Annotation: Structure probing data (2A3) for a 207-nucleotide construct.
RNA sequence: GGGAACGACUCGAGUAGAGUCGAAAAGCGCUCCUGAACGUGACUUCAGAAGACGGGCGCCGACAAGUUAGAUUGUCAAGGCGACAGUCUAGUGAGACUGGGUAAUCUAACUUACCAAUCGCCGGCGCGUUGAGUCACGUCAACAACCGUCGAGCGAUAUGACGCGCAGUUUCGACUGCGCGUCAUAAAAAGAAACAACAACAACAAC
Reactivity to 2A3 in 0.01 (KOAc 150mM, MgCl2 10mM, bicine 150mM(pH8.5), 24C), signal-to-noise 1, nucleotides 027 to 156: g080c000g040c000u020c060c050u040g060a030a000c010g020u010g000a010c000u110u060c210a120g010a190a010g040a020c000g010g030g070c000g020c000c030g080a020c010a020a000g010u000u000a000g000a000u000u060g030u110c050a100a030g300g050c110g080a060c010a000g030u030c000u110a070g220u100g300a110g000a000c000u070g000g050g010u020a010a010u000c010u000a010a000c020u010u020a070c020c020a010a070u110c040g060c050c000g030g000c010g000c040g040u040u090g000a000g000u020c000a000c010g000u000c000a050a080c060a050a000c000c020g040u060c020g010a030g010c020g010a020
2A3 adducts were read by reverse transcription with SuperScript II with manganese.